[RMDB]
An RNA of 177 nucleotides, treated with 2A3 and DMS and read out base by base. Source: RMDB libraries RFM100 and RFMREP, as collected in RNAgym. For 2A3 the reverse transcriptase was SuperScript II with manganese. Values cover nucleotides 27 to 126.

RNA sequence: GGGAACGACUCGAGUAGAGUCGAAAAAGCCCUUCUGCUUGCGGGCCAUUUGCCGCUGGUAGCGGGCGAGGUUGCGGGCCUUGCGGUCCAGAUGCUUCGGGUUGGCGAUCUUCUCGCCUGUCGACAGCAAAAUGAAGACUUUCGAGUCUUCAUUUUGAAAAGAAACAACAACAACAAC
Reactivity to 2A3 in 0.01 (KOAc 150mM, MgCl2 10mM, bicine 150mM(pH8.5), 24C), signal-to-noise 7, nucleotides 027 to 126: a010g010c010c000c000u060u070c020u020g010c010u020u030g010c010g020g020g100c070c050a250u100u120u300g070c000c000g000c010u020g020g040u030a010g010c020g010g000g010c010g000a020g000g020u060u080g050c060g010g020g000c010c000u040u180g070c100g000g000u010c010c010a030g030a190u100g010c010u020u020c030g040g010g060u060u060g040g010c020g030a050u020c050u160u050c030u050c020g010c010c020u010g040u030c030g030a040c050a040g040
Reactivity to DMS in 0.01 (KOAc 150mM, MgCl2 10mM, bicine 150mM(pH8.5), 24C), signal-to-noise 9, nucleotides 027 to 126: a150g000c010c000c000u010u030c020u000g010c010u000u000g010c030g000g010g010c120c180a180u020u020u040g020c010c010g010c000u010g010g000u010a030g040c300g000g000g000c020g010a040g000g010u010u000g010c300g010g000g020c010c000u010u040g010c060g010g010u000c020c020a060g000a110u010g010c020u000u010c020g010g000g000u010u000g000g000c020g000a040u030c240u010u010c130u000c010g010c010c010u000g000u010c020g010a090c220a060g000